RNA sequence: GGGAACGACUCGAGUAGAGUCGAAAACGUAAAGGGCGAGCUUUUGUCCGGAAUGGUUCCGCCGUGAUCGGGCCAUGCAAUAGUUGCCAACGACAACUAUGCUCCGGGUGCUCAGGCAGCGUAACGCACAAUGGAACAACCUUCGGGUUGUUCCAAAGGCUUUUAAAGUGUUCGCACUUUAAAAGCCAAAAGAAACAACAACAACAAC
Reactivity to 2A3 in 0.01 (KOAc 150mM, MgCl2 10mM, bicine 150mM(pH8.5), 24C), signal-to-noise 1, nucleotides 027 to 156: c030g010u050a020a090a050g190g020g000c010g010a080g060c000u060u130u110u160g090u150c010c000g000g000a050a040u120g030g010u300u300c000c070g010c060c090g110u140g000a160u130c020g050g000g000c010c000a020u050g000c000a000a300u000a030g000u000u010g010c060c110a140a060c150g080a130c000a000a000c000u000a000u000g010c050u010c000c000g000g000g060u050g030c000u010c010a020g180g020c090a000g000c010g050u080a090a040c040g000c090a070c050a080a100u100g000g000a030a010c030a000a000c000c090u020u010c100g090g040g000u000u000g000u000u010c000c000a000a010a030